Chemical mapping of a 177-nucleotide RNA with DMS. For DMS, 1,005 sequencing reads were counted. DMS adducts were read by reverse transcription with MarathonRT. The RNA was probed in 150 mM KOAc, 10 mM MgCl2 and 150 mM bicine (pH 8.5) at 24 C.
[RMDB]
RNA sequence: GGGAACGACUCGAGUAGAGUCGAAAAAAAAGAUAUGGACAUAAGGGAGCUCCUAGGUGCGAUGAGUAUGCUCGGAAACGAGCAUACGAGCACCGACAGAGCGAAGAACUUAUGUCCUAAGUCAAAACAAAAGAUCUUCGUUCGCGAAGAUCUUUUGAAAAGAAACAACAACAACAAC
Reactivity to DMS in 0.01 (KOAc 150mM, MgCl2 10mM, bicine 150mM(pH8.5), 24C), signal-to-noise 2, nucleotides 027 to 126: a060a010a060a160g040a000u000a300u000g000g000a030c000a020u000a010a030g030g020g000a140g080c010u000c000c000u000a300g000g020u000g030c000g030a140u020g050a300g010u000a020u000g020c000u020c020g000g020a170a090a150c010g010a030g010c000a000u010a030c000g000a250g000c010a020c020c000g030a080c300a140g000a050g010c020g000a100a050g010a100a230c040u000u000a020u000g000u000c000c000u000a020a040g000u000c040a070a090a050a120